Description:
Chemical mapping of a 177-nucleotide RNA with DMS and 2A3. The DMS profile rests on 23,263 reads. DMS (dimethyl sulfate) methylates the pairing face of unpaired adenines and cytosines. Values are in units of 0.01, from 0 to 300, in steps of 10. Values cover nucleotides 27 to 126. The RNA was probed in 150 mM KOAc, 10 mM MgCl2 and 150 mM bicine (pH 8.5) at 24 C. It was measured as part of the RMDB library OK1LIB.

[RMDB]
RNA sequence: GGGAACGACUCGAGUAGAGUCGAAAAUGAUGGCGUACAGGCCGGGCGUGGUGGCCUGAAACACGUCGUGCGCCUCCAGCAGGGCGUCGGCCUCCUUGCGGACCGAGUCGUUCUCGGGCGCCGGGUGAAAGGAUGAUACUUUCGAGUAUCAUCCUUUAAAAGAAACAACAACAACAAC
Reactivity to DMS in 0.01 (KOAc 150mM, MgCl2 10mM, bicine 150mM(pH8.5), 24C), signal-to-noise 5, nucleotides 027 to 126: u030g010a080u020g000g010c050g000u010a120c050a050g000g020c000c000g010g010g000c050g020u000g010g010u010g000g000c020c000u010g000a080a080a090c180a050c020g000u010c010g010u010g010c020g010c030c000u010c050c080a150g010c110a090g000g000g010c050g020u010c030g010g000c010c020u000c030c020u000u020g000c120g000g000a080c080c000g000a000g010u000c010g010u000u000c010u000c000g010g000g010c010g010c020c000g000g000g000u010g010
Reactivity to 2A3 in 0.01 (KOAc 150mM, MgCl2 10mM, bicine 150mM(pH8.5), 24C), signal-to-noise 4, nucleotides 027 to 126: u260g020a040u110g010g010c020g000u050a050c010a020g020g010c010c010g000g040g000c060g020u100g040g050u090g050g000c000c020u020g030a060a030a000c060a000c010g020u020c010g020u030g020c020g010c010c000u040c030c030a080g050c040a030g020g030g000c020g030u030c020g010g020c000c000u020c010c010u060u120g040c070g020g010a020c000c000g000a000g010u000c000g000u010u010c000u000c000g000g010g000c020g000c010c000g020g010g010u110g070